Chemical mapping of a 177-nucleotide RNA with DMS.
The data come from the RNA Mapping Database (RMDB), library TTRDEL.
The reactions ran in a buffer of 150 mM KOAc, 10 mM MgCl2 and 150 mM bicine (pH 8.5), at 24 C.
RNA sequence: GGGAACGACUCGAGUAGAGUCGAAAAGAUAUGGAGCUAGGCACUCAGCAACAGCUCGGAAACGAGACAUGCUGGGUGCUAGCUCCUAAGUCAAAGAGCUGCUUGGUCUUCGGACCAAGCAGCUCAACAAACACACAGCGUUCGCGCUGUGUGUUUGAAAAGAAACAACAACAACAAC
Reactivity to DMS in 0.01 (KOAc 150mM, MgCl2 10mM, bicine 150mM(pH8.5), 24C), signal-to-noise 1, nucleotides 027 to 126: g000a040u000a300u000g000g000a000g040c000u000a030g020g010c000a000c000u000c000a000g000c000a050a040c190a210g000c000u000c000g000g000a090a160a150c000g000a000g000a050c080a150u000g000c000u000g010g010g010u010g000c010u000a000g000c010u000c000c010u000a000a080g000u000c040a040a100a050g000a010g010c000u000g020c000u000u030g000g010u000c000u000u000c180g010g010a010c000c000a010a000g000c000a000g000c000u000c000a010a030